Structure probing data (DMS) for a 177-nucleotide construct.
The RNA was probed in 150 mM KOAc, 10 mM MgCl2 and 150 mM bicine (pH 8.5) at 24 C.
RNA sequence: GGGAACGACUCGAGUAGAGUCGAAAAAAGGUGUGCUGGAGUGCACUAGAAUGCAUCUUCUGAUACAAUUCUAUAUGCCCCUUAGGAUGUAAUGGUGUUAUUUCCUUUAGCAAUUAUAAAUCCGAGCAUAAGCAGUCUUGUUCGCAAGACUGCUUAUAAAAGAAACAACAACAACAAC
Reactivity to DMS in 0.01 (KOAc 150mM, MgCl2 10mM, bicine 150mM(pH8.5), 24C), signal-to-noise 1, nucleotides 027 to 126: a130a050g000g010u000g030u010g020c060u010g000g000a040g030u020g020c010a040c050u000a050g020a080a140u000g010c010a020u010c010u000u000c090u020g020a110u000a020c040a030a060u010u030c050u020a080u000a170u010g010c040c010c000c070u000u010a070g010g000a040u010g010u000a030a050u010g020g030u000g000u000u000a070u010u010u010c100c060u000u000u000a070g020c030a030a060u000u000a080u010a060a110a080u000c010c030g000a150g000c240

Reactivities are given for positions 27 through 126. The data come from the RNA Mapping Database (RMDB), library OK2TRN.